[RMDB]
RNA sequence: GGGAACGACUCGAGUAGAGUCGAAAAGUCUCCCCUUCGGGGGAGACAAAAAGCGUACUACCAAGACAUGAGUGUGGGAACUACUGCUUCCCAAAUAGGAAGCAGCCCAUAAACUCAACAGCUUGGUAUCGCAAAAAUGCCCUCUUCGGAGGGCAAACAUAGUUGUAUACUUCGGUAUACAACUAUGAAAAGAAACAACAACAACAAC
Reactivity to DMS in 0.01 (KOAc 150mM, MgCl2 10mM, bicine 150mM(pH8.5), 24C), signal-to-noise 2, nucleotides 027 to 156: g010u000c010u000c000c000c000c010u000u000c300g040g030g050g030g000a010g030a010c000a010a040a050a080a130g010c000g040u000a100c200u000a010c010c020a000a020g010a040c090a300u000g000a040g110u010g010u000g010g000g010a160a120c080u010a300c020u000g010c000u000u000c010c000c000a030a090a240u000a030g000g020a020a050g020c000a010g000c010c030c040a050u020a060a120a140c000u010c000a060a080c090a050g000c000u000u000g010g030u000a030u010c010g000c040a030a050a060a060a130u010g000c000c000c010u000c000u050u000c300g010g030a020g040g010g040c000a000a000a070
Reactivity to 2A3 in 0.01 (KOAc 150mM, MgCl2 10mM, bicine 150mM(pH8.5), 24C), signal-to-noise 2, nucleotides 027 to 156: g000u010c000u000c000c000c000c070u000u140c250g000g000g040g000g020a000g000a000c000a000a010a010a000a000g020c020g030u050a070c020u010a000c030c000a010a020g000a060c040a150u080g010a010g010u000g000u040g020g000g050a030a050c080u260a010c010u300g000c000u010u040c020c000c040a110a300a050u140a050g000g000a000a000g010c010a010g010c020c000c000a000u040a040a070a010c000u000c010a040a010c030a030g040c000u020u000g000g000u000a000u070c000g000c000a000a000a160a000a000u100g000c010c010c000u010c010u010u040c140g110g010a000g000g030g010c010a000a000a000